[RMDB]
The data come from the RNA Mapping Database (RMDB), library OK2TRN.
Chemical mapping of a 177-nucleotide RNA with DMS and 2A3.
The DMS profile rests on 889 reads.
In probing experiments dimethyl sulfate is read out at A N1 and C N3, which are open when not base-paired.
For DMS the reverse transcriptase was MarathonRT.

RNA sequence: GGGAACGACUCGAGUAGAGUCGAAAACAAGUACGAGGUGGACAGCGUGGAUGAGUCGCGCAACGCCGCGGAUUUCUCGUCCGCCUUCAACUCCAACGACAAUUGCGAGAGUGCGGCCGAGUGCGAGUCUCACUUCCGGAUUCGUCCGGAAGUGAGAAAAAGAAACAACAACAACAAC
Reactivity to DMS in 0.01 (KOAc 150mM, MgCl2 10mM, bicine 150mM(pH8.5), 24C), signal-to-noise 2, nucleotides 027 to 126: c100a120a040g010u000a090c120g010a090g040g060u000g000g020a050c120a100g020c140g000u000g030g000a150u000g020a100g020u010c000g020c000g050c040a000a130c300g000c090c000g020c010g020g000a070u010u000u030c020u000c050g000u010c040c010g000c020c040u000u000c080a100a050c060u000c020c060a020a060c100g000a140c230a090a200u000u000g030c060g010a080g000a020g030u010g000c070g030g030c000c000g000a230g020u000g000c060g010a100g000
Reactivity to 2A3 in 0.01 (KOAc 150mM, MgCl2 10mM, bicine 150mM(pH8.5), 24C), signal-to-noise 1, nucleotides 027 to 126: c010a040a020g040u050a100c050g000a030g000g030u060g000g060a060c020a010g040c030g040u030g020g050a080u050g030a070g160u140c020g040c000g000c030a030a080c040g030c050c010g000c000g020g070a130u110u140u040c000u020c020g010u000c030c000g000c000c000u040u020c040a010a020c000u000c030c010a050a020c050g190a060c050a160a260u140u150g060c010g010a030g000a020g100u160g000c030g010g010c030c000g000a000g010u020g010c000g010a000g070